RNA sequence: GGGAACGACUCGAGUAGAGUCGAAAAAGCGCUUAACCUUGACACAGUAACCUUCCUUGGCAGUAGAGCGCCCGAACUUGUAUGCGCCAUCAGCGCGCUUGCCCAUGGAGCCUUCGAAUCCAAGUCCAGUACUAGUGUCCUUCGGGACACUAGUACUAAAAGAAACAACAACAACAAC
Reactivity to DMS in 0.01 (KOAc 150mM, MgCl2 10mM, bicine 150mM(pH8.5), 24C), signal-to-noise 2, nucleotides 027 to 126: a050g010c030g020c030u000u000a140a120c060c010u000u000g010a050c080a050c110a070g000u000a090a090c070c100u000u000c040c010u000u000g000g010c040a030g010u010a060g000a080g010c140g000c020c030c040g000a060a120c100u020u000g020u000a030u000g010c000g010c000c010a120u020c150a070g010c130g000c020g020c010u000u020g010c030c030c050a100u010g000g030a060g000c070c040u010u010c050g000a060a130u010c060c040a060a120g000u020c080c090
Reactivity to 2A3 in 0.01 (KOAc 150mM, MgCl2 10mM, bicine 150mM(pH8.5), 24C), signal-to-noise 1, nucleotides 027 to 126: a000g050c050g000c020u050u060a120a100c000c010u040u110g050a040c040a040c010a120g040u060a040a100c020c000u080u000c010c020u040u030g050g010c030a070g020u080a060g030a010g000c040g000c000c000c020g110a090a070c010u070u090g040u100a080u200g010c000g040c040c000a140u080c060a040g020c000g000c000g010c060u030u040g080c000c000c000a060u110g070g020a050g010c000c020u060u150c020g080a040a020u000c010c030a060a030g030u030c050c000